An RNA of 177 nucleotides, treated with 2A3 and DMS and read out base by base. The data come from the RNA Mapping Database (RMDB), library OK2TST. For 2A3 the reverse transcriptase was SuperScript II with manganese. The DMS profile rests on 871 reads. For DMS the reverse transcriptase was MarathonRT. Conditions: 150 mM KOAc, 10 mM MgCl2 and 150 mM bicine (pH 8.5), 24 C. For 2A3, 1,129 sequencing reads were counted.

[RMDB]
RNA sequence: GGGAACGACUCGAGUAGAGUCGAAAAACUACCUGGUCGUGAAGAGCGACGGGGAAACGGUCAUACUCUCGCACCCGGGUAUCGAGGAGGUCUACGAGAAGAUCAUGAGCGCCUGCCGUGCGACACGCGAUGGUUACCGGUUCGCCGGUAACCAUCGAAAAGAAACAACAACAACAAC
Reactivity to 2A3 in 0.01 (KOAc 150mM, MgCl2 10mM, bicine 150mM(pH8.5), 24C), signal-to-noise 1, nucleotides 027 to 126: a000c060u070a070c000c020u100g230g040u000c050g020u030g090a100a040g070a030g090c000g030a040c030g000g010g020g020a060a200a020c040g050g060u050c010a020u030a140c020u050c020u000c070g050c010a020c060c010c000g000g030g040u080a070u100c050g010a110g070g080a170g030g000u000c050u050a070c100g060a020g040a270a020g000a050u070c030a060u120g030a000g160c060g090c030c030u070g080c000c020g010u020g020c000g070a030c000a050c130g120
Reactivity to DMS in 0.01 (KOAc 150mM, MgCl2 10mM, bicine 150mM(pH8.5), 24C), signal-to-noise 1, nucleotides 027 to 126: a020c100u010a120c010c000u000g030g000u000c010g020u010g030a100a090g000a150g030c050g000a000c010g010g000g000g020a080a040a200c100g000g000u000c000a080u000a110c080u020c030u010c000g000c040a080c030c000c020g060g000g000u000a030u000c070g000a230g030g040a070g000g040u020c040u000a090c030g000a100g000a110a090g000a050u000c000a080u010g000a080g010c130g020c010c030u000g030c050c000g020u020g000c020g000a150c120a050c070g010